[RMDB]
RNA sequence: GGGAACGACUCGAGUAGAGUCGAAAAAUCGUUCUUAAAUUUCCUUGAAACGGAAAAGAAUUGCCAAGUUCGCUUGGAAGGAGAUUAUUCUUUUUUGUUUCAACGAAAAAUAUUUAAAAGGAGGAAGAAUUGAACUCGAGUUCGCUCGAGUUCAAUUAAAAGAAACAACAACAACAAC
Reactivity to 2A3 in 0.01 (KOAc 150mM, MgCl2 10mM, bicine 150mM(pH8.5), 24C), signal-to-noise 1, nucleotides 027 to 126: a000u030c000g010u010u000c010u030u030a100a230a180u030u020u010c000c000u020u000g000a000a000a000c000g030g000a000a000a000a000g000a010a010u050u000g050c000c000a000a010g010u000u060c220g040c040u000u000g060g020a050a060g270g140a290g030a060u200u170a000u020u190c000u000u000u000u000u000u000g000u000u000u000c010a000a000c000g000a030a020a020a020a020u130a080u090u270u240a140a130a000a050g080g020a050g060g000a000a080g040
This 177-nucleotide RNA was probed chemically with 2A3. For 2A3, 500 sequencing reads were counted. Conditions: 150 mM KOAc, 10 mM MgCl2 and 150 mM bicine (pH 8.5), 24 C. It was measured as part of the RMDB library RFM100.